[RMDB]
RNA sequence: GGGAACGACUCGAGUAGAGUCGAAAAUACAUCCCGCGCUCCACCGAAUACCGGAUUCACCAACGCGUGUUGGCGUUGCGGGCAUCCGCCAACGUGUCGCUGCGAGGCGGGCAAAGUGUACAUCCGCUCUUUGCCUCUUAUUCGUAAGAGGCAAAGAAAAAGAAACAACAACAACAAC
Reactivity to DMS in 0.01 (KOAc 150mM, MgCl2 10mM, bicine 150mM(pH8.5), 24C), signal-to-noise 4, nucleotides 027 to 126: u010a050c070a090u010c000c020c040g010c050g000c010u010c040c020a060c100c020g000a060a090u000a080c230c060g010g020a080u000u010c040a090c070c010a010a010c030g010c030g000u010g030u000u010g010g020c000g000u000u000g020c150g000g010g020c220a040u010c010c000g030c160c060a050a090c160g000u010g010u000c040g020c080u010g060c110g010a080g030g010c040g000g000g030c300a020a020a140g010u010g010u000a050c100a180u000c010c030g010c140
Reactivity to 2A3 in 0.01 (KOAc 150mM, MgCl2 10mM, bicine 150mM(pH8.5), 24C), signal-to-noise 3, nucleotides 027 to 126: u070a010c020a080u130c020c010c000g000c010g100c000u020c000c000a040c000c010g050a100a030u080a150c040c030g010g010a010u000u060c060a050c080c010a040a030c010g040c010g020u170g300u280u220g190g000c010g000u000u030g060c110g000g020g020c040a000u020c000c000g070c060c010a120a100c080g060u080g030u110c010g000c030u010g070c160g020a000g040g000c010g000g000g000c040a120a120a000g040u030g010u020a040c040a110u010c000c010g050c060